[RMDB]
RNA sequence: GGGAACGACUCGAGUAGAGUCGAAAAAUAAGUUAUUGCAAGAAAGGAUAGGAAAAAGACUGAUGAGUGUCGUAGAUAAAUCUUCGAUUCCGAGUAGUCUGACUAUUGGUAUCGAGGUAAUCCAUCUCGCUAGAUCCAAGUUCGCUUGGAUCUAGCGAAAAGAAACAACAACAACAAC
Reactivity to 2A3 in 0.01 (KOAc 150mM, MgCl2 10mM, bicine 150mM(pH8.5), 24C), signal-to-noise 2, nucleotides 027 to 126: a000u160a050a020g050u070u140a040u170u050g060c040a090a120g030a090a050a000g090g100a020u100a080g070g000a070a080a000a000a110g040a000c010u060g040a010u090g060a180g170u060g000u000c000g030u010a010g000a020u140a030a200a010u060c010u000u030c000g010a000u010u000c000c000g030a010g000u060a000g000u040c210u110g030a110c000u080a080u010u000g060g010u000a010u010c000g000a000g040g010u030a040a020u050c060c030a040u090c010u000
Chemical mapping of a 177-nucleotide RNA with 2A3. It was measured as part of the RMDB libraries RFM100 and RFMREP. The reactions ran in a buffer of 150 mM KOAc, 10 mM MgCl2 and 150 mM bicine (pH 8.5), at 24 C.